Chemical mapping of a 177-nucleotide RNA with 2A3 and DMS. For 2A3, 821 sequencing reads were counted. 2A3 adducts were read by reverse transcription with SuperScript II with manganese. The data come from the RNA Mapping Database (RMDB), library RFM100. For DMS the reverse transcriptase was MarathonRT. Values cover nucleotides 27 to 126. The reactions ran in a buffer of 150 mM KOAc, 10 mM MgCl2 and 150 mM bicine (pH 8.5), at 24 C.
RNA sequence: GGGAACGACUCGAGUAGAGUCGAAAAAAUAAUUAGAGCGGUUCCAGUGACUCUGUUUUAACUGGAACUGCCUGGGCUACGGGCUCAAUUGGAUUAGCCUUGCCAUUCGGCAGGGCUUUUUCAUAGGUGCAUACAAUGUCUUCGGACAUUGUAUGCAAAAAGAAACAACAACAACAAC
Reactivity to 2A3 in 0.01 (KOAc 150mM, MgCl2 10mM, bicine 150mM(pH8.5), 24C), signal-to-noise 2, nucleotides 027 to 126: a000a000u300a000a040u180u100a020g010a010g060c020g060g000u000u010c010c000a010g000u000g010a050c020u050c060u270g130u140u070u000u050a010a020c000u000g000g000a000a000c000u000g020c000c000u020g000g000g000c020u110a120c280g030g100g010c000u000c000a030a240u060u030g000g000a000u000u000a010g000c000c010u000u000g000c010c000a080u260u240c060g000g010c010a000g000g000g000c000u000u000u000u020u000c000a000u000a040g130g020
Reactivity to DMS in 0.01 (KOAc 150mM, MgCl2 10mM, bicine 150mM(pH8.5), 24C), signal-to-noise 1, nucleotides 027 to 126: a080a020u050a030a060u060u000a060g050a090g030c020g020g060u000u000c010c010a000g050u000g000a090c160u030c180u040g000u000u000u000u000a110a080c010u000g000g000a040a000c000u000g030c000c010u000g010g000g000c000u000a110c150g050g020g000c000u050c020a050a020u000u000g020g000a000u000u000a000g000c000c000u000u000g000c000c000a230u020u020c220g000g000c000a000g010g000g030c000u000u000u000u000u000c000a020u030a070g040g000